The data come from the RNA Mapping Database (RMDB), library OK3TST. This 207-nucleotide RNA was probed chemically with DMS and 2A3. For 2A3, 1,776 sequencing reads were counted.
[RMDB]
RNA sequence: GGGAACGACUCGAGUAGAGUCGAAAACAAAUAUAUCAGAAAUUUUGUCAUAUGGCAUACAAGAAGGUAAGUAUGUCAGUAUUAAACAGCAAACCAUAGAUUACUCUACUUACUCUGAGAGGUACUUCAUCAUCAUUGAAGCCAUAAGUGUGAUUAACAUGCUUAGGUUGUUCGCAACCUAAGCAUGAAAAGAAACAACAACAACAAC
Reactivity to DMS in 0.01 (KOAc 150mM, MgCl2 10mM, bicine 150mM(pH8.5), 24C), signal-to-noise 2, nucleotides 027 to 156: c050a060a090a070u000a080u000a100u020c050a150g000a110a150a170u010u000u000u000g040u010c020a140u000a080u000g020g010c010a040u000a030c000a060a120g020a100a100g040g020u000a070a220g000u000a010u000g020u010c040a070g020u000a050u000u010a060a100a150c070a090g000c090a090a090a070c090c030a100u010a110g000a150u000u000a050c020u000c040u010a030c000u010u010a030c050u000c040u000g000a080g010a080g010g020u000a030c030u000u000c020a010u000c110a110u010c080a120u010u020g010a060a070g000c010c020a140u000a040a060g020u000g010u020g010a120u010u000a040a190
Reactivity to 2A3 in 0.01 (KOAc 150mM, MgCl2 10mM, bicine 150mM(pH8.5), 24C), signal-to-noise 3, nucleotides 027 to 156: c010a000a080a000u260a030u070a050u180c050a040g200a100a240a050u080u130u100u190g020u040c000a020u090a070u140g020g000c010a000u000a020c020a050a050g140a050a030g130g020u090a090a050g010u000a030u040g010u000c020a000g010u000a020u050u150a050a170a060c040a020g080c100a030a070a090c050c020a030u040a030g090a050u070u100a050c020u000c020u050a030c000u040u010a020c010u030c040u100g040a020g000a020g130g000u060a050c000u050u020c000a070u000c000a010u020c000a030u020u160g030a020a010g010c040c000a050u070a100a060g050u050g020u020g100a030u050u030a040a020
2A3 adducts were read by reverse transcription with SuperScript II with manganese. Reactivities are given for positions 27 through 156.